[RMDB]
RNA sequence: GGGAACGACUCGAGUAGAGUCGAAAACGGCGCCGUGAUGGCGGCGUACAACAAGGUCAACGGAGAUUACGCUGCCGGCAACGACCACUUGCUCAACGACGUGCUGAAAGGUGCUUGGGGAUACCGCUAGGUGGCUGAAUUUCGAUUCAGCCACCUAAAAAGAAACAACAACAACAAC
Reactivity to 2A3 in 0.01 (KOAc 150mM, MgCl2 10mM, bicine 150mM(pH8.5), 24C), signal-to-noise 3, nucleotides 027 to 126: c040g020g000c030g000c000c000g070u070g060a110u140g050g000c000g010g000c000g030u060a070c010a040a030c030a050a080g100g100u170c060a080a010c060g100g000a120g010a080u040u080a030c020g000c060u040g030c010c010g060g010c060a110a010c050g010a020c010c020a060c040u030u070g000c000u010c020a080a050c040g110a060c050g020u060g030c020u050g070a140a070a040g000g000u040g000c000u030u010g060g000g000g000a060u080a080c010c010g010c130
Reactivity to DMS in 0.01 (KOAc 150mM, MgCl2 10mM, bicine 150mM(pH8.5), 24C), signal-to-noise 2, nucleotides 027 to 126: c010g010g030c020g000c010c020g070u050g020a230u060g040g000c000g010g010c000g030u000a030c060a090a110c140a180a230g000g050u080c120a090a000c180g050g000a140g010a200u020u000a120c010g000c070u020g020c040c010g000g000c040a090a040c140g000a150c050c110a050c130u000u030g000c020u000c060a060a120c160g000a020c080g000u000g020c000u020g000a070a060a130g000g010u000g000c020u000u000g000g010g000g010a000u060a050c110c010g000c230
Structure probing data (2A3 and DMS) for a 177-nucleotide construct. For DMS, 2,136 sequencing reads were counted. The data come from the RNA Mapping Database (RMDB), library OK1LIB. The 2A3 profile rests on 1,941 reads. The reactions ran in a buffer of 150 mM KOAc, 10 mM MgCl2 and 150 mM bicine (pH 8.5), at 24 C.